The data come from the RNA Mapping Database (RMDB), library OK2TRN. Structure probing data (DMS) for a 177-nucleotide construct. Reactivities are given for positions 27 through 126. The reactions ran in a buffer of 150 mM KOAc, 10 mM MgCl2 and 150 mM bicine (pH 8.5), at 24 C. DMS (dimethyl sulfate) methylates the pairing face of unpaired adenines and cytosines.
[RMDB]
RNA sequence: GGGAACGACUCGAGUAGAGUCGAAAAUUUGCCGGUGCAUGCAGGGUGCACGACCCGAUAAAGGCGGCAAAGUCUGAGUUCUUACGGUAGACCAGCGGUAAAAACCCAGCAUUGGAUAGCUCGUUCAGAUUUAGUGCGGUUUCGACCGCACUAAAUCAAAAGAAACAACAACAACAAC
Reactivity to DMS in 0.01 (KOAc 150mM, MgCl2 10mM, bicine 150mM(pH8.5), 24C), signal-to-noise 1, nucleotides 027 to 126: u020u000u000g020c020c010g030g010u000g000c080a000u000g000c060a180g030g000g050u000g000c020a010c030g020a110c010c000c010g000a180u010a040a070a110g000g010c020g010g040c010a010a030a050g000u020c030u020g020a070g000u000u000c010u000u010a060c050g000g030u000a000g000a200c120c050a120g030c030g000g060u000a020a020a030a030a100c090c000c030a120g010c030a120u000u010g010g010a050u000a110g060c110u000c040g000u000u000c110a170